[RMDB]
RNA sequence: GGGAACGACUCGAGUAGAGUCGAAAACGGUCAACAUUCAAACAGUGAUCGAACCGCAGUGUUGGCUGGCCCGUUAUGCAUACGCGGAAGGAUUCGGCUGUGGGCAAUCUCGUGUAUCUACGGCCAAGCAAUUUGCCUAGUUCGCUAGGCAAAUUGCAAAAGAAACAACAACAACAAC
Reactivity to 2A3 in 0.01 (KOAc 150mM, MgCl2 10mM, bicine 150mM(pH8.5), 24C), signal-to-noise 1, nucleotides 027 to 126: c000g000g010u010c000a030a010c000a020u180u010c030a000a220a140c030a110g140u050g150a060u060c030g050a080a010c040c020g000c030a000g000u010g020u040u020g020g000c010u010g060g020c060c000c000g010u200u160a150u300g010c050a060u060a210c050g000c000g010g060a110a110g110g010a070u110u000c060g030g000c000u000g000u040g060g060g000c020a010a070u020c060u050c080g110u000g000u000a060u030c030u070a020c030g010g050c030c000a030a030
Reactivity to DMS in 0.01 (KOAc 150mM, MgCl2 10mM, bicine 150mM(pH8.5), 24C), signal-to-noise 1, nucleotides 027 to 126: c000g010g000u000c000a010a000c000a000u030u010c160a120a140a100c160a100g000u000g010a020u000c080g000a130a060c040c000g020c030a110g010u000g000u000u000g010g000c000u000g020g010c010c000c000g030u020u040a030u010g000c220a120u000a050c130g020c000g000g020a070a080g020g010a060u000u000c220g000g000c000u000g060u000g000g000g000c130a070a030u000c130u000c100g000u010g020u000a090u020c020u000a030c070g000g010c010c020a110a110